Record summary: The data come from the RNA Mapping Database (RMDB), library OK2TRN. Structure probing data (DMS and 2A3) for a 177-nucleotide construct. For DMS, 3,047 sequencing reads were counted. The reactions ran in a buffer of 150 mM KOAc, 10 mM MgCl2 and 150 mM bicine (pH 8.5), at 24 C.
[RMDB]
RNA sequence: GGGAACGACUCGAGUAGAGUCGAAAAUACUGCUGAGGAAAUAAGGCGUGCAAACGGCCCGAACAACCAGUUGAUGUCGCUCCCACAUCUUAUCAAUCGCUCUUAGCAUGACGUCUUCGCACUGAGCUGUUAGCGUCUUAUUCGUAAGACGCUAACAAAAAGAAACAACAACAACAAC
Reactivity to DMS in 0.01 (KOAc 150mM, MgCl2 10mM, bicine 150mM(pH8.5), 24C), signal-to-noise 4, nucleotides 027 to 126: u000a060c100u010g030c020u010g030a110g000g010a090a080a100u010a100a080g000g020c030g020u010g010c220a050a100a050c070g000g010c010c020c020g000a080a120c270a050a120c040c090a080g000u000u010g000a100u010g010u000c040g000c050u000c040c060c010a150c160a040u000c060u000u000a060u000c100a100a070u010c100g010c030u000c030u000u020a110g020c030a080u000g010a090c110g000u000c060u000u000c060g010c100a120c100u000g010a070g000c070
Reactivity to 2A3 in 0.01 (KOAc 150mM, MgCl2 10mM, bicine 150mM(pH8.5), 24C), signal-to-noise 3, nucleotides 027 to 126: u090a020c050u010g050c000u040g020a090g080g110a080a070a060u100a050a060g010g030c020g040u040g000c020a110a110a110c060g100g040c030c020c020g010a020a010c030a030a050c030c020a010g010u060u060g130a100u080g020u040c030g000c040u000c000c000c000a020c030a050u070c070u110u160a090u190c040a090a020u060c050g030c040u000c020u080u100a040g010c020a050u080g080a080c010g060u020c050u080u070c090g040c010a020c090u060g030a020g000c010
DMS adducts were read by reverse transcription with MarathonRT.